The record gives the reactivity of an RNA of 177 nucleotides to DMS. Reactivities are given for positions 27 through 126. The RNA was probed in 150 mM KOAc, 10 mM MgCl2 and 150 mM bicine (pH 8.5) at 24 C. DMS adducts were read by reverse transcription with MarathonRT.
[RMDB]
RNA sequence: GGGAACGACUCGAGUAGAGUCGAAAAGCCAAUGUAGGUCAGGUGUGGCACUUUGGAACCGCGUCCAAUCUGGGCAUUCUUGGCUUCGACGAAGCCACCGAGUUUGCCGUUUUCGCCCACAACGGUCUAAGGUGGGCGUGUUCGCACGCCCACCUUAAAAAGAAACAACAACAACAAC
Reactivity to DMS in 0.01 (KOAc 150mM, MgCl2 10mM, bicine 150mM(pH8.5), 24C), signal-to-noise 1, nucleotides 027 to 126: g000c010c030a080a050u010g020u000a090g050g000u010c070a030g030g020u000g020u000g020g030c030a050c030u010u000u000g020g010a070a120c150c160g000c130g030u000c020c020a100a060u000c080u000g010g010g030c010a030u000u020c020u000u000g000g010c010u000u000c020g020a090c150g000a170a070g000c010c010a070c260c040g000a020g020u000u010u010g000c020c000g000u000u000u000u000c030g020c050c010c030a050c170a010a040c050g010g030u020c120